[RMDB]
RNA sequence: GGGAACGACUCGAGUAGAGUCGAAAAGAUAAGAAUAGGGGGUGUUUGUAGGUGAACCAAAAGCACCUGUGUGAGGACAUGUAUUUAAAAGUAAACAAAACAGAAACAAAAAUAAAAUCAGCAGAAAAACCUCUCCCUUGCAUCUUCUUCUGUAUCCAGAUGAACGUAUGUUCGCAUACGUUCAUCUAAAAGAAACAACAACAACAAC
Reactivity to 2A3 in 0.01 (KOAc 150mM, MgCl2 10mM, bicine 150mM(pH8.5), 24C), signal-to-noise 1, nucleotides 027 to 156: g020a020u070a000a000g020a030a150u140a270g000g010g000g030g040u020g010u010u030u020g020u120a030g000g070u100g000a130a100c050c030a010a160a000a000g010c000a010c000c030u020g040u040g020u030g010a000g000g030a050c060a080u040g090u110a090u060u160u130a160a140a000a020g010u060a010a160a110c060a020a060a060a010c020a030g080a040a050a000c040a020a210a020a010a040u040a040a040a020a020u090c010a000g100c040a010g250a050a100a040a080a050c000c000u020c000u000c010c000c000u010u030g030c020a010u020c000u080u000c000u070u000c020u080g030u060a100u060c030c020